[RMDB]
RNA sequence: GGGAACGACUCGAGUAGAGUCGAAAAAGGCUAUUUGCAUUUCAGAUAAUGGCCCAGUCACUAGAAAGAAACAACAACAACAUAUUGUCAUUUGAAGCCAACAUUAAAAACAGUCUAGCCAUAAAGUUAUAAAGCAGCGUAUAACUUCUGCAUGUAAGCCACGACGUGACUUCGGUCACGUCGUGGCAAAAGAAACAACAACAACAAC
Reactivity to DMS in 0.01 (KOAc 150mM, MgCl2 10mM, bicine 150mM(pH8.5), 24C), signal-to-noise 2, nucleotides 027 to 083: a010g000g000c000u000a000u000u000u000g000c080a170u020u000u000c130a210g010a210u000a070a090u000g010g000c030c010c050a140g020u010c070a140c070u000a100g000a010a000a010g000a000a000a000c010a000a000c000a000a000c000a000a000c010a000u000a000
Reactivity to 2A3 in 0.01 (KOAc 150mM, MgCl2 10mM, bicine 150mM(pH8.5), 24C), signal-to-noise 9, nucleotides 027 to 083: a000g000g000c000u000a000u000u000u020g030c040a060u050u100u160c010a010g000a030u060a050a010u020g010g000c000c010c000a020g050u050c020a020c160u070a060g140a060a000a000g000a000a000a000c000a000a000c000a000a000c000a000a000c000a000u000a000